Structure probing data (DMS and 2A3) for a 170-nucleotide construct. High 2A3 reactivity points to a flexible backbone, as in loops and unpaired stretches. For DMS the reverse transcriptase was MarathonRT. 2A3 adducts were read by reverse transcription with SuperScript II with manganese. Source: RMDB library 15KLIB, as collected in RNAgym. The RNA was probed in 150 mM KOAc, 10 mM MgCl2 and 150 mM bicine (pH 8.5) at 24 C.
[RMDB]
RNA sequence: GGGAACGACUCGAGUAGAGUCGAAAAGAGGGGUGGAACGUCGGGUGGAAGCACUCCCAAGAAGAGCAGAGAGAAGGCAAGAAUCGGACGAUUUCCCCAUGACGCUGGAGACAUCCUGGAAGGGGAAUGGCAUGCGCCUUCGGGCGCAUGAAAAGAAACAACAACAACAAC
Reactivity to DMS in 0.01 (KOAc 150mM, MgCl2 10mM, bicine 150mM(pH8.5), 24C), signal-to-noise 6, nucleotides 027 to 129: g020a070g000g000g000g000u120g000g010a040a100c120g030u040c070g000g000g000u020g010g000a010a020g030c010a130c040u020c020c020c040a130a090g030a070a030g020a070g070c070a060g010a070g000a080g030a050a050g030g000c230a030a090g010a090a080u010c080g020g040a160c110g030a090u000u080u010c020c000c020c050a060u010g000a070c150g030c080u040g000g000a040g000a030c190a060u010c030c070u090g000g000a160a080g020g000g010g010a010a050u020g010g040
Reactivity to 2A3 in 0.01 (KOAc 150mM, MgCl2 10mM, bicine 150mM(pH8.5), 24C), signal-to-noise 2, nucleotides 027 to 129: g060a030g000g010g000g000u070g000g010a050a020c000g060u000c050g030g020g020u090g010g000a070a000g010c050a010c040u060c010c000c000a010a000g030a040a000g040a030g040c080a000g070a000g000a010g000a040a060g030g030c000a000a020g010a050a060u080c010g010g030a000c000g030a010u020u010u060c000c000c020c000a030u130g000a040c040g020c080u010g000g000a010g000a070c000a020u000c000c020u000g000g040a020a060g020g000g000g010a000a000u050g050g010